[RMDB]
RNA sequence: GGGAACGACUCGAGUAGAGUCGAAAAGGGCCAUGUACCUAUCCAAAAUGAGAUCCCAGCUUGCACACUGUGCUAAUUUGAGAUUCUCAUGCCUCCUACUUGGAGAGAUCUGGACUAGAAGUCAGGGAAUAGGUCGUUUCUUUCGAGAAACGACCAACUUCAAAUGUCACUUCGGUGACAUUUGAAGAAAAGAAACAACAACAACAAC
Reactivity to DMS in 0.01 (KOAc 150mM, MgCl2 10mM, bicine 150mM(pH8.5), 24C), signal-to-noise 2, nucleotides 027 to 156: g000g010g090c000c040a060u000g000u000a090c020c010u010a100u000c010c050a030a080a150a040u020g000a060g010a020u010c010c010c000a040g030c180u000u000g020c000a040c030a160c180u030g030u000g020c010u020a020a050u000u000u000g030a020g000a040u000u000c000u000c000a050u000g020c120c010u000c020c020u010a080c150u000u010g010g000a010g010a170g020a080u000c060u020g030g000a080c030u000a090g020a070a160g000u000c030a090g020g000g000a130a160u000a060g010g070u010c000g000u000u000u000c000u000u010u000c240g010a060g020a010a000a030c000g000a010c000c030a000a010
Reactivity to 2A3 in 0.01 (KOAc 150mM, MgCl2 10mM, bicine 150mM(pH8.5), 24C), signal-to-noise 5, nucleotides 027 to 156: g040g000g010c040c020a090u110g040u160a080c010c000u030a050u090c020c010a020a040a060a110u020g000a000g000a020u000c010c000c000a000g020c060u030u060g020c020a020c050a090c170u300g010u010g020c030u110a070a110u050u070u080g070a070g000a030u300u080c000u000c010a000u040g050c000c000u020c010c010u140a270c120u120u210g000g000a020g000a000g010a040u030c050u110g030g010a010c020u040a060g030a150a010g120u060c050a010g050g000g000a070a150u090a190g000g000u000c000g000u000u000u000c000u020u010u070c110g090a010g000a010a000a000c000g000a000c000c000a000a000
This 207-nucleotide RNA was probed chemically with DMS and 2A3.
Conditions: 150 mM KOAc, 10 mM MgCl2 and 150 mM bicine (pH 8.5), 24 C.
Reactivities are rounded to 0.1 and cut off at 0 and 3.
It was measured as part of the RMDB library M2RFPK.